This 177-nucleotide RNA was probed chemically with 2A3 and DMS. For DMS, 940 sequencing reads were counted. The RNA was probed in 150 mM KOAc, 10 mM MgCl2 and 150 mM bicine (pH 8.5) at 24 C. Values cover nucleotides 27 to 126.
RNA sequence: GGGAACGACUCGAGUAGAGUCGAAAAAGGUAUUACGCAGAAAUUGUUCCAGUAACUGUUGCUCAAUUUCAAACGUAGACAUCUCUUUGUCGGCUUUCAGCUUCAAUCGCUUUGAAACAUCGAGCAAAUAGUCUCUGAAGUUCGCUUCAGAGACUAUAAAAGAAACAACAACAACAAC
Reactivity to 2A3 in 0.01 (KOAc 150mM, MgCl2 10mM, bicine 150mM(pH8.5), 24C), signal-to-noise 1, nucleotides 027 to 126: a000g020g040u110a030u080u010a030c000g020c020a000g050a070a110a050u080u010g060u000u030c050c010a020g000u010a070a100c100u060g070u160u130g000c000u000c000a020a020u000u000u000c000a000a020a020c000g000u000a000g050a040c010a030u110c170u190c000u220u020u030g060u000c000g010g000c030u150u300u300c220a020g000c000u030u050c020a050a060u170c040g060c130u090u000u060g010a000a040a010c080a110u090c080g020a000g020c000a010a010
Reactivity to DMS in 0.01 (KOAc 150mM, MgCl2 10mM, bicine 150mM(pH8.5), 24C), signal-to-noise 2, nucleotides 027 to 126: a040g010g040u000a030u000u010a050c120g020c040a110g020a140a090a040u000u000g000u000u010c010c000a160g010u000a090a170c160u000g010u020u000g000c000u000c010a070a080u000u000u010c030a020a040a070c050g000u010a040g010a020c040a010u000c300u010c270u000u000u010g000u000c000g000g000c000u020u010u020c200a040g020c020u000u000c120a080a060u000c080g000c150u000u000u010g000a000a010a020c130a080u010c120g010a000g020c030a020a030
DMS adducts were read by reverse transcription with MarathonRT.